This 177-nucleotide RNA was probed chemically with 2A3 and DMS.
The 2A3 profile rests on 4,536 reads.
Source: RMDB library OK2TRN, as collected in RNAgym.
DMS adducts were read by reverse transcription with MarathonRT.
For 2A3 the reverse transcriptase was SuperScript II with manganese.
RNA sequence: GGGAACGACUCGAGUAGAGUCGAAAACUGCCGGCGCCGCGCUCGACGGACCCCGCCCGACGGCCCGCGCCUCGCGUGCGUGGUCGGCCGCGUCGUUGCCGUCGUCGUCCUCGUCCUCGUCGGACGACAACGGGAUGUGGUUCGCCACAUCCCGUUGAAAAGAAACAACAACAACAAC
Reactivity to 2A3 in 0.01 (KOAc 150mM, MgCl2 10mM, bicine 150mM(pH8.5), 24C), signal-to-noise 2, nucleotides 027 to 126: c020u050g040c030c010g020g020c010g010c030c010g050c020g000c040u040c020g030a020c020g020g050a060c010c000c000c000g090c000c000c000g050a050c040g030g000c020c030c010g030c040g020c010c020u060c090g070c070g040u070g000c000g100u160g020g030u040c020g010g020c040c030g030c020g010u000c000g080u100u120g030c020c000g010u030c020g000u000c010g000u020c020c010u000c020g050u060c000c040u090c070g280u090c070g030g010a000c000g010a000
Reactivity to DMS in 0.01 (KOAc 150mM, MgCl2 10mM, bicine 150mM(pH8.5), 24C), signal-to-noise 4, nucleotides 027 to 126: c070u000g020c130c020g010g010c020g020c070c050g010c110g020c040u010c030g010a050c040g000g000a190c050c020c030c020g020c040c030c020g000a080c060g000g010c000c020c120g000c090g000c020c010u000c160g020c160g020u000g000c020g000u010g020g020u000c010g010g030c050c030g000c040g030u000c030g030u000u000g020c010c020g000u000c030g010u000c030g000u000c010c060u000c040g010u000c020c030u000c170g010u000c160g010g000a020c010g010a060